[RMDB]
RNA sequence: GGGAACGACUCGAGUAGAGUCGAAAAGUGAUGCUUUAGGGAGCCUAUUGUUUGAUGGUUUAUAGGAGCCGGAUUUGUCUUUUUGACUAAUUUUCAACCUAUUCUUACUUCCAAAACUGUUGCAAUGCAACGGUUUAUUGUUCGCAAUAAACCGUUGAAAAGAAACAACAACAACAAC
Reactivity to 2A3 in 0.01 (KOAc 150mM, MgCl2 10mM, bicine 150mM(pH8.5), 24C), signal-to-noise 3, nucleotides 027 to 126: g000u000g060a060u080g000c080u070u070u110a030g040g010g020a050g000c020c010u060a090u070u120g130u140u140u070g080a080u110g000g140u090u140u080a040u030a030g040g020a010g010c040c050g020g000a000u060u000u020g000u000c000u030u290u100u100u200g000a010c000u010a030a040u000u010u040u040c020a040a040c000c010u000a020u020u030c000u020u050a070c010u030u030c040c020a040a100a110a090c060u060g040u050u030g000c040a070a040u100g010
Reactivity to DMS in 0.01 (KOAc 150mM, MgCl2 10mM, bicine 150mM(pH8.5), 24C), signal-to-noise 6, nucleotides 027 to 126: g020u000g020a060u000g000c110u000u000u000a080g000g010g010a120g010c050c030u000a050u010u000g010u010u010u010g020a100u010g000g010u000u000u000a070u000a060g010g000a090g020c300c190g010g010a030u000u000u000g010u000c000u000u000u010u010u010g010a020c020u010a030a030u000u000u000u000c050a130a170c040c010u000a020u000u010c050u000u000a080c100u010u000c010c030a060a060a060a090c150u010g010u000u000g020c060a080a120u010g000

This 177-nucleotide RNA was probed chemically with 2A3 and DMS. DMS adducts were read by reverse transcription with MarathonRT. The DMS profile rests on 6,133 reads. For 2A3, 2,745 sequencing reads were counted.